About this RNA:
An RNA of 207 nucleotides, treated with 2A3 and read out base by base. Reactivities are rounded to 0.1 and cut off at 0 and 3.
RNA sequence: GGGAACGACUCGAGUAGAGUCGAAAAAGUAAAAUUGCCUUGCUGAGAAAACUUAUUAUCUGAAUGCUGAUUUUUACUUGCAGUACCGAGGAACAAGCAUUCUAUUUCUGAAUAAACAUUUUACUUAUAACACUAUGGCUGAUCAGAGGCGGCUGAAAGUCAGUCCUAGUUUCGACUAGGACUGACUAAAAGAAACAACAACAACAAC
Reactivity to 2A3 in 0.01 (KOAc 150mM, MgCl2 10mM, bicine 150mM(pH8.5), 24C), signal-to-noise 1, nucleotides 027 to 156: a000g030u030a020a020a040a040u020u050g040c040c020u080u040g040c050u010g040a040g000a000a080a080a080c060u130u140a110u060u120a170u300c050u040g020a000a000u010g020c000u000g110a140u080u010u010u030u160a080c000u020u060g010c040a080g180u080a170c160c050g000a030g000g050a070a020c010a050a020g000c000a000u010u020c080u030a080u000u130u090c010u030g020a110a060u090a060a050a020c000a000u000u000u030u130a030c010u070u000a000u040a300a000c030a030c050u060a090u180g060g000c000u000g000a120u100c000a000g030a070g040g000c000g040g000c040u100g070a050a050
It was measured as part of the RMDB library OK3TST.